[RMDB]
RNA sequence: GGGAACGACUCGAGUAGAGUCGAAAAGAGACAGGGUUCGCCCUGUCUCAAAGAACGCGAAGAAAAGCGAAAUAAAACGGUAUGGUACGCGACCAACAACAAAAACUAAGACCUUCGGGUCUUAGAACUACACCUUAGUGUUCGCACUAAGGUGUAGAAAAGAAACAACAACAACAAC
Reactivity to DMS in 0.01 (KOAc 150mM, MgCl2 10mM, bicine 150mM(pH8.5), 24C), signal-to-noise 2, nucleotides 027 to 126: g010a010g020a020c020a000g000g000g010u000u020c160g000c010c010c000u000g000u000c000u000c000a000a060a100g010a120a160c020g000c000g000a070a130g020a080a090a040a190g010c020g000a040a060a070u000a070a040a120a020c050g000g030u000a070u000g000g010u000a040c050g000c040g000a140c020c010a040a020c070a060a030c030a090a120a060a060a120c010u000a000a010g020a050c020c000u000u020c200g080g000g020u000c020u000u000a000g030a050a080
Reactivity to 2A3 in 0.01 (KOAc 150mM, MgCl2 10mM, bicine 150mM(pH8.5), 24C), signal-to-noise 3, nucleotides 027 to 126: g020a000g010a000c000a010g000g000g010u030u040c060g100c000c000c010u000g010u020c000u000c000a010a000a010g000a030a010c010g040c000g050a080a060g070a140a200a010a010g090c020g080a080a090a050u220a010a110a030a020c100g000g050u120a070u130g080g000u080a020c020g010c000g040a020c010c010a020a050c020a030a010c010a010a180a000a010a010c000u010a010a000g000a010c010c000u050u070c260g070g000g020u010c000u020u000a000g000a000a000